[RMDB]
RNA sequence: GGGAACGACUCGAGUAGAGUCGAAAAGCUCUAGGAGACUAGAGCAAUACGUACGAGCGAUCGUGUCACUGAACUCAGAUAGACAGUUCAGAGGCUGUCAAAGGACAUAGCUAUAGCUAUGUCCAAAGACCAUUGAUACCUUCGGGUAUCAAUGGUCAAAAGAAACAACAACAACAAC
Reactivity to 2A3 in 0.01 (KOAc 150mM, MgCl2 10mM, bicine 150mM(pH8.5), 24C), signal-to-noise 3, nucleotides 027 to 126: g000c000u000c000u000a020g000g070a120g030a020c010u000a000g000a010g000c000a000a000u060a020c040g080u060a020c040g010a010g060c050g030a030u090c060g020u000g020u090c010a000c120u040g030a050a000c000u010c050a000g040a220u120a040g080a100c090a000g010u000u050c000a010g000a050g060g000c010u050g030u150c070a070a070a070g010g000a000c000a000u000a000g000c010u160a060u090a270g000c000u020a000u010g000u000c000c000a000a000a000
Reactivity to DMS in 0.01 (KOAc 150mM, MgCl2 10mM, bicine 150mM(pH8.5), 24C), signal-to-noise 2, nucleotides 027 to 126: g000c000u000c000u000a020g000g000a120g000a300c000u010a000g000a000g010c000a000a050u000a010c140g000u020a000c020g000a030g040c230g030a090u000c000g000u000g010u000c010a110c010u000g000a050a000c010u030c100a230g010a250u070a060g000a020c240a010g000u010u000c030a010g000a050g000g030c030u000g000u080c030a050a090a140g000g000a030c000a000u000a000g010c000u000a120u040a140g010c010u000a020u000g000u000c000c000a000a040a020